[RMDB]
RNA sequence: GGGAACGACUCGAGUAGAGUCGAAAAAAUGAAAUAUUCAGUAAAUUGGUAUUACGAAAAUUUAAACAAACAUUUAAGACAAGAUGAGGUUAAAUCUUAUUUAGAUCUAAUUGAAUAUGGUAAUGAAAAACUGUGUUAUGUUCGCAUAACACAGUUUAAAAGAAACAACAACAACAAC
Reactivity to 2A3 in 0.01 (KOAc 150mM, MgCl2 10mM, bicine 150mM(pH8.5), 24C), signal-to-noise 2, nucleotides 027 to 126: a000a000u090g020a060a000a000u030a000u000u030c050a040g070u180a060a060a060u070u080g040g030u120a050u180u140a030c090g040a050a040a040a040u100u120u150a150a110a020c050a010a080a000c000a050u080u040u260a130a040g040a020c050a030a040g000a020u030g010a000g000g070u060u060a100a010a000u040c020u000u040a060u110u050u020a030g050a160u010c000u070a040a060u070u030g000a000a000u020a070u060g060g000u050a070a080u080g040a110a040
Reactivity to DMS in 0.01 (KOAc 150mM, MgCl2 10mM, bicine 150mM(pH8.5), 24C), signal-to-noise 3, nucleotides 027 to 126: a100a030u030g000a100a080a020u000a010u000u000c000a040g030u020a040a050a080u030u010g010g020u020a020u010u000a050c100g000a070a040a070a070u020u000u020a050a040a110c100a050a080a120c090a040u000u000u000a080a060g010a030c040a070a060g000a030u000g010a020g010g010u010u050a060a080a100u080c010u010u000a050u020u010u010a170g000a100u000c010u000a060a030u020u000g000a020a040u010a010u000g010g000u050a060a020u000g000a080a030